The record gives the reactivity of an RNA of 177 nucleotides to 2A3 and DMS. Conditions: 150 mM KOAc, 10 mM MgCl2 and 150 mM bicine (pH 8.5), 24 C. The data come from the RNA Mapping Database (RMDB), library TTRDES.
RNA sequence: GGGAACGACUCGAGUAGAGUCGAAAAGAUAUGGACGGACGAUGAGCAUGAACUACAGCUAGUUAUCGGAAACGAUAAAUAGCUGCAUGCGAGUCCGUCCUAAGUCAAACGAGAGUUCGCUCUCGAAGAAAAUUAACAGGUUCGCCUGUUAAUUUUCAAAAGAAACAACAACAACAAC
Reactivity to 2A3 in 0.01 (KOAc 150mM, MgCl2 10mM, bicine 150mM(pH8.5), 24C), signal-to-noise 4, nucleotides 027 to 126: g030a020u080a030u120g000g000a010c010g000g010a010c040g200a300u300g080a040g060c010a000u010g020a060a070c110u300a110c300a020g000c010u000a000g020u010u010a000u020c000g020g040a090a060a030c000g020a000u000a010a020a020u030a010g000c010u000g010c000a000u000g010c000g000a020g010u000c000c000g000u000c000c000u000a000a000g000u000c010a020a000a070c020g000a000g010a010g020u090u190c200g090c120u000c000u010c010g000a130a080
Reactivity to DMS in 0.01 (KOAc 150mM, MgCl2 10mM, bicine 150mM(pH8.5), 24C), signal-to-noise 6, nucleotides 027 to 126: g020a060u000a300u000g000g010a020c010g010g000a000c000g030a170u010g030a290g010c010a010u000g000a100a040c110u020a300c020a000g000c000u000a010g000u000u010a000u000c000g000g000a140a090a240c000g010a000u000a000a030a020u000a000g020c000u000g000c010a010u000g000c000g000a160g010u000c000c000g000u000c000c000u000a000a060g010u000c050a090a120a200c030g000a100g010a030g010u000u010c210g020c020u000c000u000c010g010a080a120